[RMDB]
RNA sequence: GGGAACGACUCGAGUAGAGUCGAAAAUUAGCCCAGACUUAUGAGAGAGUUAUGACCUCUCAGCCCCUCCACCUUGGGGUGCCCUAUUCGGAGCACUGCAGUUCCCGAUAGAAAGGCUAAGCACCUCCUAUCGAUAUUCGUUCGCGAAUAUCGAUAGAAAAGAAACAACAACAACAAC
Reactivity to 2A3 in 0.01 (KOAc 150mM, MgCl2 10mM, bicine 150mM(pH8.5), 24C), signal-to-noise 1, nucleotides 027 to 126: u080u070a020g030c000c000c010a000g030a080c060u130u170a100u170g000a010g000a000g020a020g000u100u150a120u170g070a070c000c000u000c000u010c000a010g040c000c000c000c000u000c020c020a090c010c040u080u060g020g020g010g000u020g020c010c000c000u080a100u000u090c020g020g000a060g040c000a060c220u300g000c060a030g010u040u010c000c030c030g000a010u000a040g080a080a150a020g070g000c060u060a070a010g000c010a060c010c000u030c010
Reactivity to DMS in 0.01 (KOAc 150mM, MgCl2 10mM, bicine 150mM(pH8.5), 24C), signal-to-noise 2, nucleotides 027 to 126: u000u000a180g010c000c020c020a140g000a100c160u000u000a030u010g000a040g000a030g000a030g000u000u010a100u000g010a150c130c000u000c000u000c000a040g000c000c010c000c000u000c070c050a150c140c090u000u000g000g020g000g020u000g000c020c140c010u020a130u000u000c300g000g010a090g010c020a080c120u020g010c150a130g000u000u000c010c010c010g010a040u000a040g010a090a160a050g000g000c140u010a030a080g000c050a140c020c030u000c070